[RMDB]
RNA sequence: GGGAACGACUCGAGUAGAGUCGAAAAAGGUGCUUGAGACUCUUACACAGGGGUUUUUUGAGCUUUCUAACAAAGUUGUGGAUGUCACUACUGAGAUCUUUAAGCUCAUUCCUUGGUUUAUCCGUAAUCUACCUCCCGAAUUCGUUCGGGAGGUAGAAAAAGAAACAACAACAACAAC
Reactivity to DMS in 0.01 (KOAc 150mM, MgCl2 10mM, bicine 150mM(pH8.5), 24C), signal-to-noise 1, nucleotides 027 to 126: a040g030g010u010g010c060u000u000g020a150g000a090c010u010c020u010u040a060c180a150c140a060g000g000g010g000u000u030u010u000u000u010g010a010g000c010u000u000u010c040u040a020a160c070a040a140a030g000u000u000g020u000g010g010a170u030g010u000c010a010c030u000a080c050u000g010a300g000a020u000c080u010u000u020a050a000g030c000u000c010a030u000u000c000c000u000u010g000g020u000u000u000a130u010c030c050g080u010a110a110